Chemical mapping of a 207-nucleotide RNA with 2A3 and DMS. It was measured as part of the RMDB library M2RFPK. Reactivities are given for positions 27 through 156. Values are in units of 0.01, from 0 to 300, in steps of 10.

RNA sequence: GGGAACGACUCGAGUAGAGUCGAAAAACUUGUAUAGGCGAUUAAUAAAUCUUCUGUAAAUGCUGUAAGAGGAUUACCCCUUGAGGUUUCAGCACUAGGCUGCUCUAGCUAUUAAUCAAUGCAUUUGUAACGGAAAGACAGUUCGCUGUCUUUCCAACCAAGUAACUAAGUUCGCUUAGUUACUUGGAAAAGAAACAACAACAACAAC
Reactivity to 2A3 in 0.01 (KOAc 150mM, MgCl2 10mM, bicine 150mM(pH8.5), 24C), signal-to-noise 3, nucleotides 027 to 156: a000c070u100u070g050u050a100u080a110g170g000c020g030a040u080u070a100a070u130a110a070a040u020c030u100u010c000u070g140u150a070a140a060u090g030c030u050g060u130a050a020g010a010g040g000a000u030u080a060c000c000c010c030u030u070g060a130g140g010u050u080u140c000a010g010c010a010c070u040a020g100g060c050u030g040c010u060c000u090a000g020c010u010a040u080u060a060a040u070c080a060a060u100g030c010a040u030u010u150g060u080a100a030c040g000g010a010a000a000g000a000c010a000g000u050u100c090g040c090u000g000u000c000u000u000u000c000c000a000a000
Reactivity to DMS in 0.01 (KOAc 150mM, MgCl2 10mM, bicine 150mM(pH8.5), 24C), signal-to-noise 2, nucleotides 027 to 156: a130c020u000u010g010u000a210u020a090g000g010c050g010a080u010u000a020a120u010a090a140a040u000c000u000u000c010u000g040u010a060a090a100u000g020c070u000g020u010a190a100g020a040g020g000a140u000u010a110c000c030c000c060u000u000g010a060g000g000u000u000u000c050a070g010c000a070c010u000a130g010g030c030u000g010c040u000c020u000a060g030c030u000a080u000u000a060a090u000c010a080a150u000g000c050a130u000u000u000g010u010a100a150c160g020g020a050a020a040g000a030c020a020g020u000u010c300g040c000u000g020u000c000u010u000u010c010c000a000a120